Background: An RNA of 207 nucleotides, treated with 2A3 and read out base by base. The RNA was probed in 150 mM KOAc, 10 mM MgCl2 and 150 mM bicine (pH 8.5) at 24 C. It was measured as part of the RMDB library M2RFPK.
RNA sequence: GGGAACGACUCGAGUAGAGUCGAAAAGAAAGAAAGAAGCGAGCUGGCGCAGCCGCGCGGGCAACCGUCAAUCCAGCACUUCACAAGUCUUGUCGUUCUGACAGGACAUCCAUCAACCCACCGGGAAAAAAGGACUACAGCUUCGGCUGUAGUCCAACUCUAACGCUAGGUUCGCCUAGCGUUAGAGAAAAGAAACAACAACAACAAC
Reactivity to 2A3 in 0.01 (KOAc 150mM, MgCl2 10mM, bicine 150mM(pH8.5), 24C), signal-to-noise 1, nucleotides 027 to 156: g040a020a040a020g090a020a150a010g000a100a000g020c040g130a000g000c000u000g010g000c040g000c030a050g100c120c200g030c010g000c000g020g010g000c060a040a090c020c000g020u040c040a000a070u030c010c010a010g040c050a070c010u060u060c000a020c050a230a050g000u000c010u000u020g000u000c000g110u160u220c170u300g000a010c000a010g020g010a000c000a010u000c000c020a010u060c020a000a200c020c010c010a060c030c090g000g000g200a000a020a000a020a000a210g010g000a060c010u000a000c000a000g000c000u040u040c220g170g000c010u000g000u000a000g000u000c000c000a000a000